[RMDB]
RNA sequence: GGGAACGACUCGAGUAGAGUCGAAAACUAAGUGCUGUUAAGCCUGACCAUAUGAUUCAAGUACAGGGUAUUGAUGGUCCGCAAACGAUUAGCCGAAUUGAGUUAGCGGAAAUUAUUAUUGCUCGUAGCGGUAUAGCAUAUUCGUAUGCUAUACCGCAAAAGAAACAACAACAACAAC
Reactivity to 2A3 in 0.01 (KOAc 150mM, MgCl2 10mM, bicine 150mM(pH8.5), 24C), signal-to-noise 3, nucleotides 027 to 126: c020u070a160a020g040u060g120c020u050g050u190u100a030a010g010c000c000u030g040a060c010c040a010u100a090u230g180a120u080u130c090a100a040g060u030a050c080a130g060g020g000u030a050u020u120g030a040u030g010g090u010c000c000g020c010a020a040a010c020g070a050u070u130a060g060c040c010g110a080a060u070u060g050a110g030u010u020a020g020c000g010g050a000a020a010u090u020a030u040u010a040u020u190g020c030u010c070g090u110a040
Reactivity to DMS in 0.01 (KOAc 150mM, MgCl2 10mM, bicine 150mM(pH8.5), 24C), signal-to-noise 4, nucleotides 027 to 126: c060u010a060a080g010u010g000c010u000g000u000u000a080a090g020c000c050u000g000a100c070c060a080u000a060u000g010a090u010u000c090a070a130g020u000a060c110a120g000g000g020u000a020u000u010g020a060u000g010g010u000c010c030g010c010a040a030a020c030g000a090u000u000a070g040c140c140g010a070a100u000u000g000a200g010u000u000a070g010c020g000g010a030a040a070u010u010a050u000u000a030u010u010g000c020u000c040g010u010a110

Chemical mapping of a 177-nucleotide RNA with 2A3 and DMS. It was measured as part of the RMDB library OK2TST.